Conditions: 150 mM KOAc, 10 mM MgCl2 and 150 mM bicine (pH 8.5), 24 C. Chemical mapping of a 177-nucleotide RNA with DMS and 2A3. For DMS the reverse transcriptase was MarathonRT. Reactivities are given for positions 27 through 126.
RNA sequence: GGGAACGACUCGAGUAGAGUCGAAAAAGACGGAUCCGACGGUGAGGGACGAAAGCUCGGGUCACGAACCGGAUUAGAUACCCGGGUAGUCCGAGCUGUAAACGAUGUCUGCUAGGUGUGGCACAGGGCUAGCUUCAACGUUCGCGUUGAAGCUAGCAAAAGAAACAACAACAACAAC
Reactivity to DMS in 0.01 (KOAc 150mM, MgCl2 10mM, bicine 150mM(pH8.5), 24C), signal-to-noise 2, nucleotides 027 to 126: a070g000a090c090g020g000a060u020c000c040g000a110c000g000g000u000g010a170g000g000g010a130c070g050a080a060a040g010c000u000c000g000g060g030u000c210a060c070g040a140a300c040c010g010g020a020u000u000a130g010a190u040a280c140c000c000g010g000g020u050a230g000u010c030c020g000a030g000c000u000g000u020a100a030a180c110g000a010u000g000u010c000u000g010c060u080a070g000g010u000g000u000g000g020c010a010c040a070g000g010
Reactivity to 2A3 in 0.01 (KOAc 150mM, MgCl2 10mM, bicine 150mM(pH8.5), 24C), signal-to-noise 2, nucleotides 027 to 126: a000g050a000c000g000g010a030u040c010c030g040a050c070g080g010u050g020a030g000g040g000a010c080g100a140a040a000g000c000u000c000g020g000g020u140c170a000c010g030a020a030c030c040g000g000a020u080u100a080g030a100u180a140c000c000c040g000g060g000u030a010g030u030c020c000g030a000g000c010u000g000u030a000a000a110c080g000a000u190g000u000c010u000g080c020u000a040g080g000u020g050u020g050g020c070a030c050a100g000g000